[RMDB]
RNA sequence: GGGAACGACUCGAGUAGAGUCGAAAAAGAGAGCUAGCUCUCUUCUCAGCUGAGACUAGAGUCGAGACUCUCUAGGACUGAAGAGUCAGCUUCAGAGCUAGUCGACUAGCUGAUCCUCUGAAGGAAGCUUCAGAGCUGACUUCUCCUGAUCGACUAGACACCAGCUCACCUUCGGGUGAGCUGGUGUAAAAGAAACAACAACAACAAC
Reactivity to DMS in 0.01 (KOAc 150mM, MgCl2 10mM, bicine 150mM(pH8.5), 24C), signal-to-noise 3, nucleotides 027 to 156: a030g000a020g010a010g010c020u000a230g010c000u000c000u000c010u000u000c010u000c020a200g000c140u010g030a100g010a110c040u000a010g020a010g040u000c020g010a230g000a090c030u000c010u010c000u000a090g020g010a170c040u000g010a050a060g020a150g020u000c070a050g010c020u000u000c060a060g020a190g040c010u000a010g010u000c010g010a100c000u000a050g050c020u000g010a060u000c040c000u000c010u000g010a060a030g000g010a200a210g020c010u000u000c050a090g010a030g010c110u000g000a160c080u000u000c000u010c030c020u000g000a070u010c030g000a070c010u000a030g010
Reactivity to 2A3 in 0.01 (KOAc 150mM, MgCl2 10mM, bicine 150mM(pH8.5), 24C), signal-to-noise 2, nucleotides 027 to 156: a010g020a000g000a000g010c010u040a020g000c010u010c000u000c000u020u030c020u030c020a270g040c140u300g010a010g010a030c020u000a010g000a000g050u120c070g110a060g100a240c000u000c000u000c000u020a040g060g120a060c050u050g010a030a020g040a040g060u060c060a010g060c020u040u070c060a030g000a020g080c000u000a000g000u010c010g010a020c040u040a010g030c030u020g020a040u030c000c000u000c010u000g000a010a020g040g040a120a060g100c000u020u020c000a020g010a010g030c040u060g020a050c000u080u050c050u070c020c030u100g040a180u020c010g030a020c010u000a030g000